[RMDB]
RNA sequence: GGGAACGACUCGAGUAGAGUCGAAAAGCUGGGUUCGCCCAGCACAGUGGGGUCGCUUUGUUAGUGACAUGAGCCCGACUGAAGCCUCCACGGUCGAGCGCUCAACAGCACUAACAAGAAGCGACGGAGGCACCCUAAAGCGCCCUUUCGAGGGCAAGUUUUAAUGAGAGUUCGCUCUCAUUAAAACAAAAGAAACAACAACAACAAC
Reactivity to 2A3 in 0.01 (KOAc 150mM, MgCl2 10mM, bicine 150mM(pH8.5), 24C), signal-to-noise 2, nucleotides 027 to 156: g000c010u020g000g000g030u110u160c240g070c020c020c000a000g190c030a010c010a010g220u300g020g020g010g000u010c000g000c000u000u010u050g010u000u000a010g000u020g080a190c130a220u050g000a000g000c000c000c000g010a000c000u050g010a070a000g010c010c000u000c000c020a030c010g010g010u020c010g010a100g040c200g000c020u020c010a060a180c050a170g170c000a020c000u000a000a000c010a000a000g150a120a030g020c030g000a010c000g010g000a020g000g000c000a030c020c000c000u070a100a120a040g120c070g020c040c000c000u010u050u090c210g100a040g000g000g000c010a010a010